[RMDB]
RNA sequence: GGGAACGACUCGAGUAGAGUCGAAAAUUGUCUGGGGUUCGCUCUGGUGAUAACGCUGGGUUUGCGGGUUGAACCAACUAAAGCUAUCUAAGAAAAUUCGGCUAUCUUGAUAAUUGUCAAUCAGAAAGACGAUACAUAUCUUCGGAUAUGUAUCGUCAAAAGAAACAACAACAACAAC
Reactivity to DMS in 0.01 (KOAc 150mM, MgCl2 10mM, bicine 150mM(pH8.5), 24C), signal-to-noise 2, nucleotides 027 to 126: u000u010g010u010c030u000g000g010g000g000u010u010c130g000c120u000c050u030g030g020u010g010a100u030a070a110c120g020c060u000g020g020g030u020u010u010g060c040g020g000g030u000u010g020a170a080c090c040a080a040c130u000a040a120a100g010c030u010a030u000c100u000a070a040g000a050a030a050a130u000u000c040g030g010c030u000a090u020c020u000u000g000a010u000a060a160u000u010g000u030c040a090a130u000c060a090g010a120a110a080